Structure probing data (2A3 and DMS) for a 177-nucleotide construct. DMS adducts were read by reverse transcription with MarathonRT. The reactions ran in a buffer of 150 mM KOAc, 10 mM MgCl2 and 150 mM bicine (pH 8.5), at 24 C. For 2A3, 1,925 sequencing reads were counted. It was measured as part of the RMDB library VIROID. For DMS, 1,040 sequencing reads were counted. In probing experiments dimethyl sulfate is read out at A N1 and C N3, which are open when not base-paired.

RNA sequence: GGGAACGACUCGAGUAGAGUCGAAAACGAAGGGGACCGUCCCUCGGUAAUGGCGAAUGGGACCCAGAACUCUCUUUAGCUUCCAAGAGAGAAGCAAGAGAAAACUGGCUCUCCCUUAGCCAUCCGACAAUCAACAGAACUUCGGUUCUGUUGAUUGAAAAGAAACAACAACAACAAC
Reactivity to 2A3 in 0.01 (KOAc 150mM, MgCl2 10mM, bicine 150mM(pH8.5), 24C), signal-to-noise 1, nucleotides 027 to 126: c040g090a080a080g000g000g010g050a020c040c060g170u070c010c000c000u000c000g020g030u080a100a040u000g000g000c010g010a020a020u060g000g000g000a020c040c000c000a010g000a070a060c030u000c010u030c010u020u070u180a070g010c010u010u000c010c050a300a070g230a020g010a030g000a300a000g050c000a000a000g000a000g000a010a040a000a010c000u000g000g000c000u000c000u000c000c020c000u000u000a000g000c020c000a000u010c000c000g010a010
Reactivity to DMS in 0.01 (KOAc 150mM, MgCl2 10mM, bicine 150mM(pH8.5), 24C), signal-to-noise 2, nucleotides 027 to 126: c080g020a090a140g010g000g000g010a110c090c070g000u000c000c000c010u010c010g000g000u000a070a020u000g020g030c000g010a140a050u010g000g000g010a010c170c050c000a010g000a070a300c190u000c000u000c000u000u010u000a170g020c000u010u000c000c030a160a160g000a260g000a140g010a010a010g010c000a030a000g020a040g000a000a070a060a160c010u000g040g010c000u010c080u000c000c000c000u000u010a210g010c000c010a000u010c000c000g010a110